An RNA of 177 nucleotides, treated with 2A3 and DMS and read out base by base. 2A3 adducts were read by reverse transcription with SuperScript II with manganese. The reactions ran in a buffer of 150 mM KOAc, 10 mM MgCl2 and 150 mM bicine (pH 8.5), at 24 C. Source: RMDB library RFM100, as collected in RNAgym. Values cover nucleotides 27 to 126.

RNA sequence: GGGAACGACUCGAGUAGAGUCGAAAAUGAACAAUUUACUGUUGUUCUUUUGGUUUGCACUAGGAUGCAAAAGAAAGAAAUCCCUGCGCUUUCUGUCUGUCUUUGUGGCGGCCCAGAUUGAAUUGGGACCGUUACCUCUUUUCGAAGAGGUAACGGUAAAAGAAACAACAACAACAAC
Reactivity to 2A3 in 0.01 (KOAc 150mM, MgCl2 10mM, bicine 150mM(pH8.5), 24C), signal-to-noise 2, nucleotides 027 to 126: u180g050a060a000c040a090a100u100u250u300a170c160u050g000u020u010g000u000u000c000u000u000u030u070g150g000u010u050u050g010c020a020c030u130a110g220g070a140u010g000c010a010a010a000a020g100a010a030a000g010a020a110a020u040c000c000c000u020g030c040g000c010u030u060u110c000u030g060u030c000u040g030u030c000u000u090u120g170u150g000g040c020g000g000c030c000c010a060g030a050u070u080g070a100a100u130u060g000g010g020
Reactivity to DMS in 0.01 (KOAc 150mM, MgCl2 10mM, bicine 150mM(pH8.5), 24C), signal-to-noise 2, nucleotides 027 to 126: u010g040a040a010c080a010a020u030u020u010a170c210u030g020u000u000g000u000u000c000u000u000u000u000g020g000u010u000u010g010c000a000c010u040a180g030g000a210u000g000c010a000a010a010a300g000a050a040a050g000a020a080a040u030c010c010c000u010g000c300g010c030u000u000u000c010u010g000u020c020u000g040u000c010u020u010u030g030u010g000g000c020g010g000c080c090c020a020g000a100u000u000g030a110a110u020u000g010g010g000